[RMDB]
RNA sequence: GGGAACGACUCGAGUAGAGUCGAAAACGCGUCAGAUUCGUCUGACGCGAAAGCAUAGAACAGCGCUAUCAUGUAUUAUAGUUCUAUGCAACUAUAGCGCUUAAACGAUACCGUUCGCGGUAUCGAAGUUAUAGUUGGCGUUCGCGCCAACUAUAACAAAAGAAACAACAACAACAAC
Reactivity to 2A3 in 0.01 (KOAc 150mM, MgCl2 10mM, bicine 150mM(pH8.5), 24C), signal-to-noise 4, nucleotides 027 to 126: c020g000c000g000u000c010a010g000a030u000u090c100g050u000c120u000g000a010c000g000c000g000a020a000a000g000c000a010u020a050g050a060a010c040a070g010c010g010c050u030a040u150c070a100u210g210u210a120u250u130a090u140a060g050u040u000c030u040a030u020g000c010a020a000c020u060a010u050a090g000c020g000c000u100u180a080a090a040c020g000a010u010a010c020c000g010u030u040c250g000c000g070g000u000a010u000c000g000a020a000
Reactivity to DMS in 0.01 (KOAc 150mM, MgCl2 10mM, bicine 150mM(pH8.5), 24C), signal-to-noise 2, nucleotides 027 to 126: c020g030c000g000u000c000a020g000a030u000u000c210g030u010c000u010g000a000c000g010c000g000a070a010a070g000c030a030u000a000g020a020a010c040a130g010c020g030c030u010a110u010c240a100u010g020u030a050u020u010a140u020a100g010u000u010c010u000a030u000g010c020a040a010c090u020a030u000a020g020c040g010c040u010u010a040a040a280c040g010a010u000a010c000c000g020u010u010c170g010c000g010g000u010a000u000c000g020a030a040
Record summary:
Structure probing data (2A3 and DMS) for a 177-nucleotide construct. Reactivities are given for positions 27 through 126. For DMS the reverse transcriptase was MarathonRT. The 2A3 profile rests on 4,965 reads. The reactions ran in a buffer of 150 mM KOAc, 10 mM MgCl2 and 150 mM bicine (pH 8.5), at 24 C. The DMS profile rests on 1,871 reads.